[RMDB]
RNA sequence: GGGAACGACUCGAGUAGAGUCGAAAACUUGCAUGACAGACAUUACUUGUUGUAAUAGUUGAAUAGGAUACUGUACUACCCGCAGAUGGUAGUAAGAGAUACAAGUGAAAGUCUUGUUAAGUAUGCCGUUGCCGAUUACAUUCGUGUAAUCGGCAACAAAAGAAACAACAACAACAAC
Reactivity to DMS in 0.01 (KOAc 150mM, MgCl2 10mM, bicine 150mM(pH8.5), 24C), signal-to-noise 1, nucleotides 027 to 126: c070u000u030g020c030a060u000g020a000c000a070g000a100c090a150u000u000a060c020u020u000g000u030u020g010u000a090a140u000a090g010u000u010g030a080a150u020a200g000g000a120u000a070c030u010g020u030a070c010u000a000c010c000c080g000c300a100g000a120u010g000g000u010a000g000u000a000a040g000a070g010a100u000a020c010a000a030g020u000g000a030a050a220g010u000c000u010u000g030u000u020a030a100g020u010a060u000g020c060c150